Notes: Structure probing data (DMS and 2A3) for a 207-nucleotide construct. The DMS profile rests on 2,650 reads. Reactivities are given for positions 27 through 156. The reactions ran in a buffer of 150 mM KOAc, 10 mM MgCl2 and 150 mM bicine (pH 8.5), at 24 C.
[RMDB]
RNA sequence: GGGAACGACUCGAGUAGAGUCGAAAAGGUCAAGUGGAGCGGUAAGUGCAAGCAAAGCUGCGAAAUGAAGCCCCGGUGAACGGCGGCCGUAACUAUAACGGUCCUAAGGUAGCGAAAUUCCUUGUCGGGUAAGUUCCGACCUGCACGAAAGGCGUAAGCUACUAAACCUCUUCGGAGGUUUAGUAGCAAAAGAAACAACAACAACAAC
Reactivity to DMS in 0.01 (KOAc 150mM, MgCl2 10mM, bicine 150mM(pH8.5), 24C), signal-to-noise 2, nucleotides 027 to 156: g000g030u000c040a030a130g020u010g020g000a170g090c000g030g030u000a060a120g030u010g040c080a040a090g040c040a070a140a150g040c000u010g030c000g010a110a100a060u000g010a110a110g020c000c010c010c030g050g030u000g000a100a080c050g030g010c050g010g020c020c020g010u010a070a060c090u000a100u000a060a090c050g020g000u010c000c020u000a040a100g010g010u010a090g020c050g000a090a080a100u000u010c010c040u000u010g000u000c050g010g020g020u020a020a140g020u000u010c020c010g000a040c010c040u000g000c090a130c020g010a060a060a010g010g030c060g020u010a060a300
Reactivity to 2A3 in 0.01 (KOAc 150mM, MgCl2 10mM, bicine 150mM(pH8.5), 24C), signal-to-noise 2, nucleotides 027 to 156: g020g020u070c010a060a020g050u030g040g000a040g000c050g000g080u130a180a070g060u080g050c080a030a040g030c030a030a090a120g000c040u020g020c020g030a120a030a020u120g000a060a030g030c030c000c000c000g000g000u010g020a050a040c050g010g010c040g010g040c000c000g000u030a050a050c090u060a110u050a300a030c010g030g040u030c010c000u030a040a030g040g000u010a010g060c000g020a080a010a080u020u010c010c000u020u060g010u020c000g000g000g020u110a100a040g030u110u000c000c020g020a050c020c040u010g000c060a060c030g100a040a030a000g020g020c000g030u040a100a000